[RMDB]
This 207-nucleotide RNA was probed chemically with 2A3 and DMS. Source: RMDB library OK3TST, as collected in RNAgym. High DMS reactivity at an A or C suggests that its Watson-Crick edge is free. For DMS the reverse transcriptase was MarathonRT. The reactions ran in a buffer of 150 mM KOAc, 10 mM MgCl2 and 150 mM bicine (pH 8.5), at 24 C. The 2A3 profile rests on 669 reads.

RNA sequence: GGGAACGACUCGAGUAGAGUCGAAAAGAAGGUUGUCUUGGAUAAGUAACACCCACACAUGCCUGGCAAACCCAGUGAAAAUCCUUUCUAGAAGAGGCAGGCUCAAAUUAUAUAUAUUACAAACAUACACGCAUAUGUAUGUAUGUGUGCUGUGUGAACUAAUGACCCAUUUCGAUGGGUCAUUAGUAAAAGAAACAACAACAACAAC
Reactivity to 2A3 in 0.01 (KOAc 150mM, MgCl2 10mM, bicine 150mM(pH8.5), 24C), signal-to-noise 2, nucleotides 027 to 156: g040a050a040g030g040u040u030g030u070c000u030u050g040g020a030u050a270a030g020u030a030a040c030a020c040c030c000a020c000a000c000a020u170g000c000c000u010g000g000c070a160a050a120c050c020c000a040g000u050g250a120a040a000a070u050c020c000u100u070u100c070u030a130g030a170a010g000a140g000g000c020a010g000g010c010u050c040a020a080a030u280u040a050u060a020u020a070u020a110u300u140a140c070a010a220a000c000a010u040a020c010a010c040g150c050a020u050a010u090g130u110a000u200g000u010a000u020g010u040g000u000g000c170u040g000u000g020u030g030a000
Reactivity to DMS in 0.01 (KOAc 150mM, MgCl2 10mM, bicine 150mM(pH8.5), 24C), signal-to-noise 2, nucleotides 027 to 156: g010a110a130g010g020u020u010g020u000c020u010u000g020g040a100u000a030a110g010u010a100a130c050a090c060c080c020a050c040a080c050a040u000g020c010c020u000g010g000c030a070a080a170c170c030c030a100g040u030g000a080a140a090a150u010c040c040u000u010u010c040u010a200g000a100a140g010a110g010g030c040a050g000g080c030u000c010a020a040a130u000u020a120u010a160u030a120u010a170u020u000a090c030a040a100a030c010a020u000a000c010a020c000g040c020a080u000a050u000g010u000a020u000g010u000a020u000g000u000g000u010g000c000u000g030u000g020u010g020a080
Values cover nucleotides 27 to 156. For DMS, 2,340 sequencing reads were counted.